This 177-nucleotide RNA was probed chemically with 2A3 and DMS. The 2A3 profile rests on 3,685 reads. The DMS profile rests on 7,013 reads. Values cover nucleotides 27 to 126. For 2A3 the reverse transcriptase was SuperScript II with manganese.
RNA sequence: GGGAACGACUCGAGUAGAGUCGAAAAAUCCAGUUGGACCCGGCCACUCCAGAAACCGCGCCGCCCAUCGGCAACAGCGCCGACGACACCGCGCGCGGCUGGCCGGUGAAGCCCCACUCGUCACGGCCGUAGUUUUAAAUUUCGAUUUAAAACUACGAAAAGAAACAACAACAACAAC
Reactivity to 2A3 in 0.01 (KOAc 150mM, MgCl2 10mM, bicine 150mM(pH8.5), 24C), signal-to-noise 2, nucleotides 027 to 126: a000u020c010c000a020g110u150u120g030g000a010c010c010c000g000g010c010c010a080c070u130c060c060a120g120a070a090a030c000c010g000c010g020c030c020g000c000c020c010a030u000c010g000g020c040a130a060c030a210g190c030g000c140c010g000a000c020g000a010c020a020c050c040g010c010g000c000g000c000g040g000c010u000g000g010c000c020g000g000u010g010a010a010g000c000c000c000c010a030c040u070c040g120u050c030a040c100g130g050c050
Reactivity to DMS in 0.01 (KOAc 150mM, MgCl2 10mM, bicine 150mM(pH8.5), 24C), signal-to-noise 7, nucleotides 027 to 126: a090u010c020c010a160g010u000u000g010g010a280c300c010c010g000g010c000c010a090c210u010c100c130a140g000a110a090a120c030c010g000c010g020c020c030g010c190c120c030a070u000c010g000g000c010a100a100c200a110g010c170g000c000c000g020a030c040g010a080c070a060c260c060g000c180g010c010g020c010g010g010c080u000g000g010c010c000g000g000u000g000a160a140g020c030c010c010c020a110c130u010c050g010u000c040a070c120g000g020c110